Conditions: 150 mM KOAc, 10 mM MgCl2 and 150 mM bicine (pH 8.5), 24 C.
This 177-nucleotide RNA was probed chemically with 2A3.
RNA sequence: GGGAACGACUCGAGUAGAGUCGAAAAUAGCCACAGUGGCAUUUUUCAUUAUUUAAUACUUUUGGUGCCAUCUGCUAGAAAUCAGCUACAACAAAUUCAUAAUUUUAGGAACCAUUAAAAAAAUUAUCUUAUUGAUGUUCUUCGGAACAUCAAUAAGAAAAGAAACAACAACAACAAC
Reactivity to 2A3 in 0.01 (KOAc 150mM, MgCl2 10mM, bicine 150mM(pH8.5), 24C), signal-to-noise 3, nucleotides 027 to 126: u030a000g050c000c000a020c010a060g010u000g000g000c000a010u020u040u070u100u110c030a050u000u270a210u090u220u130a200a080u210a150c110u040u160u090u100g040g000u000g020c000c000a060u050c030u020g000c060u030a010g110a020a060a030u180c060a000g050c010u120a050c020a150a000c060a060a110a040u040u100c020a030u050a230a170u160u190u080u120a050g000g090a030a070c030c030a060u220u300a020a010a020a000a000a000a180u160u090a080u050

Annotation:
For 2A3, 918 sequencing reads were counted. For 2A3 the reverse transcriptase was SuperScript II with manganese. Source: RMDB library RFM100, as collected in RNAgym.